The record gives the reactivity of an RNA of 177 nucleotides to DMS.
Reactivities are rounded to 0.1 and cut off at 0 and 3.
For DMS the reverse transcriptase was MarathonRT.
It was measured as part of the RMDB library OK2TRN.
[RMDB]
RNA sequence: GGGAACGACUCGAGUAGAGUCGAAAACAGUGGCCGUAAAAGCAUCGCGGGAAUUUGUCAUCGACGCGCCUUCCAGAAGUGGUGAUGGAGGCGCUGGCAGAUGUCGGCGUCCUGGCUUCGUGGUCACACGCCAGUGACUGUUCGCAGUCACUGGCGUAAAAGAAACAACAACAACAAC
Reactivity to DMS in 0.01 (KOAc 150mM, MgCl2 10mM, bicine 150mM(pH8.5), 24C), signal-to-noise 1, nucleotides 027 to 126: c070a260g010u000g010g000c000c010g060u010a090a090a030a000g010c000a120u010c110g040c050g030g000g000a050a030u000u000u000g000u000c020a040u010c110g000a120c220g000c000g010c000c010u030u000c000c040a130g000a230a140g000u040g030g020u000g020a220u010g010g020a040g010g020c000g030c000u000g010g000c050a060g010a000u000g010u000c030g000g000c040g000u000c080c080u000g010g020c050u000u000c140g010u020g000g000u000c060a000c000